[RMDB]
RNA sequence: GGGAACGACUCGAGUAGAGUCGAAAAGUUAAAACCGGGGAAACUCAAAUGCAGUUGUUGAAUGUCCAGAACGGGUUGGGUCAUGACUGCUUUCCUCCUGCUUUCGGGUCAAGCAGAUCGCGAAUACAGUGACGGCAUUAUUCGUAAUGCCGUCACUAAAAGAAACAACAACAACAAC
Reactivity to DMS in 0.01 (KOAc 150mM, MgCl2 10mM, bicine 150mM(pH8.5), 24C), signal-to-noise 1, nucleotides 027 to 126: g020u020u010a120a070a140a100c110c070g000g000g000g000a200a100a140c030u140c050a090a220a150u020g010c040a040g000u010u000g000u000u000g020a090a120u010g000u000c000c030a000g000a060a150c280g000g030g000u000u000g000g000g000u000c010a000u020g000a030c000u000g000c040u000u000u010c000c000u000c130c000u000g000c220u010u030u010c000g010g000g000u000c090a080a070g000c030a100g000a020u060c000g000c000g000a020a180u020a050c060
Reactivity to 2A3 in 0.01 (KOAc 150mM, MgCl2 10mM, bicine 150mM(pH8.5), 24C), signal-to-noise 1, nucleotides 027 to 126: g050u070u070a060a060a000a000c100c110g000g050g000g020a030a050a030c070u230c290a250a120a040u220g010c000a000g000u000u020g010u050u050g030a160a050u130g000u000c020c110a040g010a150a000c080g010g060g000u050u110g120g010g000u010c000a030u070g030a000c020u020g000c000u090u000u000c000c000u020c000c050u010g000c020u020u010u030c090g000g000g000u000c010a030a030g060c020a050g070a030u040c040g000c000g180a010a000u200a090c090